[RMDB]
RNA sequence: GGGAACGACUCGAGUAGAGUCGAAAAUCAGCAGUAGCUUACAUUUGGACUAUCGUGUCAGUACCAAUCUGCGCACGGUGAUUUUAUCGGGCUUUUUCGAUUCAAUUGGUAUUUAUCAGGCGGUAUCGCCACAGUAAGACUUCGGUCUUACUGUGGCAAAAGAAACAACAACAACAAC
Reactivity to DMS in 0.01 (KOAc 150mM, MgCl2 10mM, bicine 150mM(pH8.5), 24C), signal-to-noise 2, nucleotides 027 to 126: u000c100a080g010c050a120g020u000a060g000c040u010u010a080c140a090u010u000u010g000g000a080c060u000a050u010c040g050u000g010u000c030a040g000u010a130c140c090a070a040u000c030u000g010c210g010c020a010c010g000g030u000g000a080u000u040u000u000a070u000c080g010g000g020c110u000u000u000u000u000c030g000a050u000u000c060a050a110u010u000g000g000u020a070u010u000u010a100u010c070a050g010g000c030g030g010u000a090u000c050
Reactivity to 2A3 in 0.01 (KOAc 150mM, MgCl2 10mM, bicine 150mM(pH8.5), 24C), signal-to-noise 2, nucleotides 027 to 126: u060c010a000g040c000a030g040u140a020g000c010u030u080a020c010a110u070u060u140g050g020a040c060u050a040u110c030g020u010g020u030c020a000g030u060a100c040c070a020a070u060c020u040g000c020g000c070a000c020g000g090u000g030a060u140u300u070u020a070u090c050g020g020g100c090u040u090u000u130u200c030g040a040u080u030c030a050a040u080u040g020g030u050a120u020u140u030a160u100c040a030g020g020c040g010g020u060a070u120c040
An RNA of 177 nucleotides, treated with DMS and 2A3 and read out base by base. The DMS profile rests on 1,922 reads. Values cover nucleotides 27 to 126. DMS (dimethyl sulfate) methylates the pairing face of unpaired adenines and cytosines. For DMS the reverse transcriptase was MarathonRT.